Structure probing data (2A3 and DMS) for a 177-nucleotide construct. For DMS the reverse transcriptase was MarathonRT. The reactions ran in a buffer of 150 mM KOAc, 10 mM MgCl2 and 150 mM bicine (pH 8.5), at 24 C. 2A3 adducts were read by reverse transcription with SuperScript II with manganese.

[RMDB]
RNA sequence: GGGAACGACUCGAGUAGAGUCGAAAAUCCUACAUGGUUUAAUGCGUUGCGUGACUUUACGUUAAAGGGUUAUGUUCUUGCUACCAUUAUUGUGUUUCUGUGUGCUGUACUGAUGUAUUUGUGUUUACCAGAUGUGAUAGUUCGCUAUCACAUCUGGAAAAGAAACAACAACAACAAC
Reactivity to 2A3 in 0.01 (KOAc 150mM, MgCl2 10mM, bicine 150mM(pH8.5), 24C), signal-to-noise 2, nucleotides 027 to 126: u000c020c000u000a010c010a140u100g000g040u130u080u120a120a060u100g010c040g030u010u030g010c020g010u070g000a020c000u040u030u060a060c030g100u010u080a130a080a010g060g030g010u030u090a060u080g040u020u030c030u050u090g030c020u030a010c000c000a070u060u090a050u110u170g040u000g000u020u020u020c020u030g060u000g010u020g090c000u000g010u040a040c020u000g060a090u140g000u060a070u030u090u060g050u000g050u000u000u030a100
Reactivity to DMS in 0.01 (KOAc 150mM, MgCl2 10mM, bicine 150mM(pH8.5), 24C), signal-to-noise 2, nucleotides 027 to 126: u010c010c020u010a080c180a070u000g010g020u010u010u010a070a070u010g010c080g020u000u000g000c070g040u010g000a050c010u000u000u000a060c130g030u010u000a070a100a130g000g020g010u000u000a030u000g010u000u000c040u010u000g000c040u010a070c060c040a070u000u000a060u010u000g030u000g010u000u000u000c010u000g020u010g030u000g000c070u000g010u010a070c050u000g000a130u010g020u010a070u000u000u010g000u000g000u000u000u010a170